[RMDB]
RNA sequence: GGGAACGACUCGAGUAGAGUCGAAAAAGCCGGUCUACGGACCGGAAAAACGUUCAUCUCGUUUUACGGGCCGCAUUAAGAUUGAAGCCAAGGAACGGGGACUUCAGACUACGACUACGGUCGUAGAUUACGCCUCCGAGUUUCGACUCGGAGGCAACGAGAUAACUAACUUCGGUUAGUUAUCUCGAAAAGAAACAACAACAACAAC
Reactivity to DMS in 0.01 (KOAc 150mM, MgCl2 10mM, bicine 150mM(pH8.5), 24C), signal-to-noise 1, nucleotides 027 to 156: a130g010c030c010g040g010u000c000u000a120c250g020g010a020c000c010g000g000a000a010a010a040a050c080g050u010u000c160a100u020c140u000c020g000u000u000u000u000a180c080g030g000g000c000c010g000c000a120u010u010a210a170g010a170u010u040g000a090a030g000c030c010a060a110g000g010a030a140c030g010g000g010g030a030c060u000u010c000a110g030a200c000u000a000c000g000a120c000u000a090c280g080g000u000c000g010u000a010g020a070u010u000a050c100g010c000c010u010c010c030g030a070g040u000u000u010c190g000a040c050u000c010g010g000a000g010g050c000a010a000
Reactivity to 2A3 in 0.01 (KOAc 150mM, MgCl2 10mM, bicine 150mM(pH8.5), 24C), signal-to-noise 2, nucleotides 027 to 156: a010g070c000c010g020g020u000c000u030a060c190g080g010a000c000c000g000g060a030a000a010a010a000c040g030u090u040c050a160u040c020u000c010g010u000u020u010u080a080c060g010g010g000c030c010g060c060a080u140u160a100a060g080a150u050u090g040a060a010g000c000c020a050a060g050g010a010a030c010g000g000g000g040a060c000u140u090c140a060g020a140c000u010a000c000g000a000c000u020a020c190g110g000u000c010g000u010a000g000a010u020u090a030c120g010c000c010u000c000c010g000a010g000u050u100u100c140g080a040c000u000c000g000g000a000g000g000c000a000a000
This 207-nucleotide RNA was probed chemically with DMS and 2A3. For 2A3, 1,506 sequencing reads were counted.